[RMDB]
RNA sequence: GGGAACGACUCGAGUAGAGUCGAAAAACAUAUUACGAUAUGAUUCAGGUGGUGUCUUACUGGUUCGUACCAAGGGACAUAAUGGUUUCUUGUUUCCAACCAAAGAACAAGUGGCGAGCCUGAAUAAAAAACUGACUGCCGUUCGCGGCAGUCAGAAGGAUCAUUAUGACUUCGGUCAUAAUGAUCCAAAAGAAACAACAACAACAAC
Reactivity to 2A3 in 0.01 (KOAc 150mM, MgCl2 10mM, bicine 150mM(pH8.5), 24C), signal-to-noise 3, nucleotides 027 to 156: a000c040a030u150a040u130u200a070c090g040a050u040a030u160g050a040u020u030c010a010g000g000u030g050g110u180g050u100c040u030u120a130c030u060g010g010u020u040c020g000u030a030c000c030a000a000g000g010g010a000c010a040u260a150a150u220g160g000u000u000u000c000u000u000g000u010u040u010c020c010a010a010c010c000a070a070a040g090a070a040c040a100a020g030u040g110g010c030g010a010g010c000c000u000g000a010a000u050a010a020a000a000a010a020c000u000g000a000c000u000g000c000c000g030u070u050c230g010c010g090g000c000a000g000u000c000a000g000a010a010
Reactivity to DMS in 0.01 (KOAc 150mM, MgCl2 10mM, bicine 150mM(pH8.5), 24C), signal-to-noise 1, nucleotides 027 to 156: a120c080a050u000a040u000u000a000c120g010a160u000a030u000g010a180u000u000c010a060g000g030u000g040g030u000g010u000c000u000u010a090c100u000g010g030u000u010c070g030u010a140c170c030a030a150g010g010g000a030c010a050u010a140a210u010g000g000u000u000u000c000u000u010g000u000u010u000c000c020a090a150c040c060a100a070a190g000a010a060c030a040a090g030u000g000g020c020g020a300g010c000c000u050g000a040a070u010a010a010a080a120a050a110c010u000g000a000c030u000g080c040c000g080u000u010c300g070c080g020g010c030a010g000u010c000a000g000a050a060